Conditions: 150 mM KOAc, 10 mM MgCl2 and 150 mM bicine (pH 8.5), 24 C. The record gives the reactivity of an RNA of 177 nucleotides to DMS and 2A3.

[RMDB]
RNA sequence: GGGAACGACUCGAGUAGAGUCGAAAAAGUACUUCGUGUUUUCAGAUGAGCAGGGUAACAUUCAUGUGUGCAGUAUUCUGCUGCGCGAGACACGCGACGAUGCCUCCAUGUUUGAGACGUGUGUCACCAUCACGCUACCGUUCGCGGUAGCGUGAUGAAAAGAAACAACAACAACAAC
Reactivity to DMS in 0.01 (KOAc 150mM, MgCl2 10mM, bicine 150mM(pH8.5), 24C), signal-to-noise 3, nucleotides 027 to 126: a080g030u000a080c090u000u000c060g010u010g030u000u000u000u000c060a080g000a120u000g000a060g020c010a040g000g020g000u000a040a090c090a080u000u000c140a120u000g000u000g000u010g010c140a050g000u000a100u000u000c090u010g020c020u000g030c030g010c130g010a080g010a020c050a030c000g020c140g020a060c070g000a060u010g000c060c030u020c040c090a090u000g000u000u010u000g010a140g010a060c050g030u010g000u010g030u000c070a110c190
Reactivity to 2A3 in 0.01 (KOAc 150mM, MgCl2 10mM, bicine 150mM(pH8.5), 24C), signal-to-noise 2, nucleotides 027 to 126: a000g070u060a050c030u020u070c080g030u000g030u030u050u030u040c080a080g070a170u090g020a050g000c000a010g010g010g060u040a060a060c010a090u050u150c110a070u270g120u030g000u020g190c030a010g060u030a120u090u000c060u040g000c010u010g040c010g000c000g000a060g000a060c020a000c020g000c000g040a050c030g020a010u070g060c010c030u040c030c050a130u220g170u070u180u040g120a110g020a010c010g080u060g020u000g030u030c000a020c050

Background
2A3 adducts were read by reverse transcription with SuperScript II with manganese.